[RMDB]
RNA sequence: GGGAACGACUCGAGUAGAGUCGAAAAGAUAUGGAGCCUUGUGGACAUGCUUGUUAAUCGGAAACGAUUAACUGAGCAACAGCCACCGGGCUCCUAAGUCAAACCGGAUCGCUUCGGCGAUCCGGAACAUUAGAAAGCGGUUCGCCGCUUUCUAAUGAAAAGAAACAACAACAACAAC
Reactivity to 2A3 in 0.01 (KOAc 150mM, MgCl2 10mM, bicine 150mM(pH8.5), 24C), signal-to-noise 1, nucleotides 027 to 126: g000a000u020a020u070g000g000a000g000c010c000u000u000g060u000g000g000a080c170a300u300g000c010u030u010g020u000u040a020a010u000c010g030g000a060a010a000c010g000a000u050u010a010a000c040u100g030a010g000c090a100a070c080a160g010c000c000a020c000c000g000g050g040c030u000c000c010u000a010a000g000u000c000a000a030a160c000c000g030g000a000u010c010g040c130u160u130c300g220g010c000g010a000u000c020c020g010g030a000a000
Reactivity to DMS in 0.01 (KOAc 150mM, MgCl2 10mM, bicine 150mM(pH8.5), 24C), signal-to-noise 2, nucleotides 027 to 126: g020a020u000a050u010g000g000a010g010c010c000u000u010g010u000g000g000a030c090a220u000g010c000u020u000g020u000u000a020a000u000c000g010g000a020a030a030c000g010a040u000u000a010a000c010u020g020a000g000c000a110a070c230a100g010c000c000a010c000c200g000g010g010c030u010c000c000u000a000a040g000u000c000a080a190a200c020c010g000g000a010u000c000g030c020u000u020c300g030g000c000g010a000u020c000c000g020g000a030a060

The record gives the reactivity of an RNA of 177 nucleotides to 2A3 and DMS. The RNA was probed in 150 mM KOAc, 10 mM MgCl2 and 150 mM bicine (pH 8.5) at 24 C. It was measured as part of the RMDB library TTRDES.